[RMDB]
RNA sequence: GGGAACGACUCGAGUAGAGUCGAAAAGGAGAGUCAAACCAUCUAUCCGUUUCCACAAAGACAUGGUCAGAUUACUUCUAUGAACCCUGGAGUAGCCUUCAAGCCCCCUGACUUGAAAGAAGUCAAGCUAAGGCAAGAAUUUCGAUUCUUGCCUUAGAAAAGAAACAACAACAACAAC
Reactivity to 2A3 in 0.01 (KOAc 150mM, MgCl2 10mM, bicine 150mM(pH8.5), 24C), signal-to-noise 8, nucleotides 027 to 126: g030g010a020g020a010g050u070c070a120a050a090c020c010a050u060c030u120a120u040c020c030g040u020u100u020c050c020a060c050a050a160a000g090a020c040a060u040g030g000u040c020a020g020a090u050u090a170c010u050u040c020u070a090u150g080a080a090c010c000c010u020g020g010a040g030u080a030g030c010c000u060u080c040a080a040g010c010c000c000c000c020u040g010a010c000u020u020g080a030a060a080g170a060a000g030u020c010a010a000g010
Reactivity to DMS in 0.01 (KOAc 150mM, MgCl2 10mM, bicine 150mM(pH8.5), 24C), signal-to-noise 5, nucleotides 027 to 126: g010g000a050g000a080g000u020c020a050a150a110c060c010a040u020c070u020a100u010c060c010g010u000u010u000c030c030a080c170a050a130a090g020a060c130a020u010g010g020u010c100a100g010a080u020u010a070c050u000u000c040u000a130u010g000a090a090c070c020c020u000g000g000a060g020u020a070g010c030c020u000u010c070a090a070g010c010c000c000c030c040u010g000a030c010u000u000g000a060a080a120g000a050a050g000u000c050a080a120g010